[RMDB]
This 177-nucleotide RNA was probed chemically with DMS and 2A3. The data come from the RNA Mapping Database (RMDB), library M2PK50. 2A3 adducts were read by reverse transcription with SuperScript II with manganese. The reactions ran in a buffer of 150 mM KOAc, 10 mM MgCl2 and 150 mM bicine (pH 8.5), at 24 C.

RNA sequence: GGGAACGACUCGAGUAGAGUCGAAAAAGAAUAGUUUUCGAACUAUUCUCACGACGACCUUGGGAAACCCUGAGGCGCGAUCCCACGCGAUCGUCUGUACGAACACCUGGUUGUUCGCAACCAGGAAUCGUUCCUAUAAGUUCGCUUAUAGGAACGAAAAAGAAACAACAACAACAAC
Reactivity to DMS in 0.01 (KOAc 150mM, MgCl2 10mM, bicine 150mM(pH8.5), 24C), signal-to-noise 5, nucleotides 027 to 126: a020g000a020a000u000a000g000u000u000u000u020c160g020a040a020c000u000a000u000u000c000u000c140a120c090g010a040c020g000a250c040c000u000u000g000g000g000a140a100a140c270c010c020u000g010a010g000g000c090g000c010g000a080u000c000c000c000a210c070g010c050g000a120u000c010g020u000c020u000g010u010a090c180g000a110a100c210a130c000c000u000g000g010u000u000g010u000u010c190g020c010a010a010c000c000a000g000g010a020a030
Reactivity to 2A3 in 0.01 (KOAc 150mM, MgCl2 10mM, bicine 150mM(pH8.5), 24C), signal-to-noise 7, nucleotides 027 to 126: a000g010a010a000u020a010g000u010u020u070u180c240g040a000a000c000u000a010u020u000c030u030c020a060c050g060a000c000g080a080c020c000u010u010g040g000g010a210a300a240c060c000c010u010g020a000g010g020c020g000c010g020a050u020c000c020c000a010c010g020c020g060a130u120c010g010u010c060u120g140u120a070c100g080a170a020c050a030c070c000u000g010g000u010u010g020u050u060c220g000c070a010a000c000c000a000g000g000a010a010